[RMDB]
RNA sequence: GGGAACGACUCGAGUAGAGUCGAAAACACCCCCAGGCCGCGGGCCGGCUACUCUUCUUUCUCUUUCGUCGUCAUCCCUGGCCAGCCUCCGGAGUUCCUCUUCUUCCUCUCGGCUGAGGUUCUUCCCGUGCACAAACGUUCGCGUUUGUGAAAAGAAACAACAACAACAAC
Reactivity to 2A3 in 0.01 (KOAc 150mM, MgCl2 10mM, bicine 150mM(pH8.5), 24C), signal-to-noise 9, nucleotides 027 to 129: c080a070c000c010c000c010c020a050g040g020c020c010g080c070g040g030g020c030c000g010g010c010u080a090c040u030c020u130u030c010u040u160u010c030u000c000u030u090u070c040g050u010c000g010u020c040a080u070c030c000c000u000g020g000c010c010a020g020c020c000u020c020c010g040g010a040g020u040u030c010c010u020c000u060u010c000u070u040c010c000u010c010u010c010g050g000c040u040g020a030g020g010u040u010c000u030u010c010c000c010g040u100g020
Reactivity to DMS in 0.01 (KOAc 150mM, MgCl2 10mM, bicine 150mM(pH8.5), 24C), signal-to-noise 9, nucleotides 027 to 129: c070a260c020c000c000c010c000a110g010g020c050c020g020c090g020g020g020c100c040g020g010c060u040a080c090u030c050u030u020c030u020u020u020c030u000c040u010u010u020c070g000u000c080g020u020c050a090u020c020c010c010u000g040g000c020c030a040g020c050c020u020c040c060g020g020a090g000u000u000c000c030u030c040u010u010c020u000u000c010c010u020c000u000c010g000g050c030u020g000a110g020g050u000u000c070u000u000c030c010c000g050u060g000